[RMDB]
RNA sequence: GGGAACGACUCGAGUAGAGUCGAAAACGCAUGCGUACUCGUGACGGUGCGGCUUCGUUGGUUUGGGUCUGUCGCGGUAGGCCCUGUCUGACGGGUCAGGGCUUGUUCAUGCAGGUCUGUGAGUGCGGGAGCAUGAAUCGUUCGCGGUUCAUGCUCCAAAAGAAACAACAACAACAAC
Reactivity to DMS in 0.01 (KOAc 150mM, MgCl2 10mM, bicine 150mM(pH8.5), 24C), signal-to-noise 2, nucleotides 027 to 126: c020g010c040a010u030g030c030g000u000a030c010u020c120g020u030g010a030c030g000g030u000g010c050g000g000c040u000u010c040g010u000u020g010g020u000u010u010g000g000g000u000c020u000g040u020c090g020c120g010g010u000a030g000g000c010c000c000u000g000u010c030u000g020a100c190g000g000g000u000c010a000g000g000g000c000u010u000g010u000u000c000a000u000g000c000a000g000g000u000c020u010g010u010g000a080g020u010g010c110g010
Reactivity to 2A3 in 0.01 (KOAc 150mM, MgCl2 10mM, bicine 150mM(pH8.5), 24C), signal-to-noise 4, nucleotides 027 to 126: c020g050c020a010u150g070c010g010u020a050c010u000c020g190u220g060a010c010g010g050u070g000c010g020g000c020u120u140c050g030u020u020g040g030u080u120u140g020g000g000u000c010u040g050u060c020g030c080g090g000u020a000g010g000c000c000c000u000g000u000c010u010g040a020c000g040g010g000u010c030a030g010g020g050c020u000u020g000u050u160c010a010u060g000c010a010g000g020u000c030u030g080u040g040a040g040u040g020c010g020